[RMDB]
Chemical mapping of a 207-nucleotide RNA with 2A3. It was measured as part of the RMDB library M2RFPK. 2A3 adducts were read by reverse transcription with SuperScript II with manganese.
RNA sequence: GGGAACGACUCGAGUAGAGUCGAAAAGCAUCGACGACGGUCCUGCCAUGAGACCGUAACGAGGACAUGUCGCCUCGAAUGGCGUCGGGGAGCCGGCAGCUUACCCCAAAGAUGAGCGCCUAAUGCCUAUACCCGAUUCGCUUCGGCGAAUCGGGAAGCGUCUACAAUGAUUCGUCAUUGUAGACGCAAAAGAAACAACAACAACAAC
Reactivity to 2A3 in 0.01 (KOAc 150mM, MgCl2 10mM, bicine 150mM(pH8.5), 24C), signal-to-noise 2, nucleotides 027 to 156: g020c000a080u150c020g110a080c000g000a010c000g050g010u020c020c040u150g220c130c030a150u140g020a050g000a120c000c000g000u000a040a000c030g000a010g000g010a010c120a160u280g020u090c040g000c020c000u010c030g010a070a080u100g010g020c040g000u050c010g010g020g000g000a010g070c050c050g090g000c020a000g000c000u020u190a200c000c000c020c060a080a180a020g090a060u200g040a030g030c010g030c020c030u100a090a030u120g050c020c010u170a170u080a140c000c000c000g010a000u000u000c000g030c010u030u060c180g100g000c000g010a010a000u000c010g000g010g000a000a000